[RMDB]
RNA sequence: GGGAACGACUCGAGUAGAGUCGAAAACUAAAGUGAUGAGGAACCAGAUAGGGACAACAGACUUGUUUGAAUGACGAGGAAAGUCUUUUACAGCCCAGUUUUUAGUAGAGCUUGGGCGCCAUACCUGUGACUUCUCAUAGUUCGCUAUGAGAAGUCAAAAAGAAACAACAACAACAAC
Reactivity to 2A3 in 0.01 (KOAc 150mM, MgCl2 10mM, bicine 150mM(pH8.5), 24C), signal-to-noise 5, nucleotides 027 to 126: c030u100a080a030a070g130u090g100a080u090g010a070g110g040a010a040c020c010a050g040a080u100a040g040g000g020a030c010a030a000c010a100g120a030c000u060u080g170u050u180u120g220a200a090u300g030a040c030g000a020g010g060a100a050a020g010u030c010u010u070u010u040a070c100a010g030c010c010c000a010g010u000u000u000u060u060a210g040u100a040g010a000g030c050u120u150g000g000g010c020g020c010c020a040u080a140c020c000u070g020
Reactivity to DMS in 0.01 (KOAc 150mM, MgCl2 10mM, bicine 150mM(pH8.5), 24C), signal-to-noise 4, nucleotides 027 to 126: c020u000a030a080a130g010u000g010a070u020g020a080g010g000a110a100c080c070a020g010a100u020a050g000g000g010a050c070a050a070c130a140g000a080c010u000u020g010u000u000u020g020a080a050u010g000a030c050g010a100g000g000a120a100a090g000u000c020u000u000u040u010a100c170a130g010c000c000c000a020g010u010u000u010u000u010a130g020u020a100g000a030g010c020u010u040g010g010g010c020g000c060c070a080u030a050c070c030u010g000
Structure probing data (2A3 and DMS) for a 177-nucleotide construct. The reactions ran in a buffer of 150 mM KOAc, 10 mM MgCl2 and 150 mM bicine (pH 8.5), at 24 C. It was measured as part of the RMDB libraries RFM100 and RFMREP. Reactivities are given for positions 27 through 126. For 2A3 the reverse transcriptase was SuperScript II with manganese.